[RMDB]
RNA sequence: GGGAACGACUCGAGUAGAGUCGAAAAGGGCAGUUUUACCGCCGUAGUUUUUUUAUUAUUUUGACGACGGAAAGGGAUGCAUAGUAUCCGAGCAUCCAGGAUACGUUCGUCGUUGGCGGGCUGCCCAGGCCGCAGUGUUCUUCGGGACGCUGUGGCCAAAAGAAACAACAACAACAAC
Reactivity to DMS in 0.01 (KOAc 150mM, MgCl2 10mM, bicine 150mM(pH8.5), 24C), signal-to-noise 9, nucleotides 027 to 126: g000g000g000c000a000g010u000u020u050u040a090c000c000g020c000c000g020u010a020g010u000u000u060u050u050u060u020a030u020u010a050u010u020u030u040g010a010c010g000a020c010g010g000a070a160a160g000g000g010a040u010g010c010a090u020a150g010u030a090u030c180c110g000a150g010c010a010u010c010c000a100g010g010a130u030a090c040g010u010u010c000g010u000c000g000u020u020g010g010c000g000g000g000c000u000g000c000c000c000a010
Reactivity to 2A3 in 0.01 (KOAc 150mM, MgCl2 10mM, bicine 150mM(pH8.5), 24C), signal-to-noise 9, nucleotides 027 to 126: g000g000g000c010a010g010u020u070u160u190a060c000c000g000c000c010g000u020a020g010u010u020u020u020u140u040u140a210u110u040a110u020u180u090u200g010a000c000g000a000c000g010g070a060a070a080g120g010g010a010u030g000c020a030u070a200g120u130a140u120c110c070g010a020g000c000a010u010c000c000a010g100g050a060u080a120c030g040u050u100c000g000u000c010g000u040u030g000g000c000g000g000g000c000u000g000c000c000c000a000

Record summary: Structure probing data (DMS and 2A3) for a 177-nucleotide construct. It was measured as part of the RMDB library OK1LIB. The DMS profile rests on 70,841 reads. The reactions ran in a buffer of 150 mM KOAc, 10 mM MgCl2 and 150 mM bicine (pH 8.5), at 24 C. The 2A3 profile rests on 73,603 reads.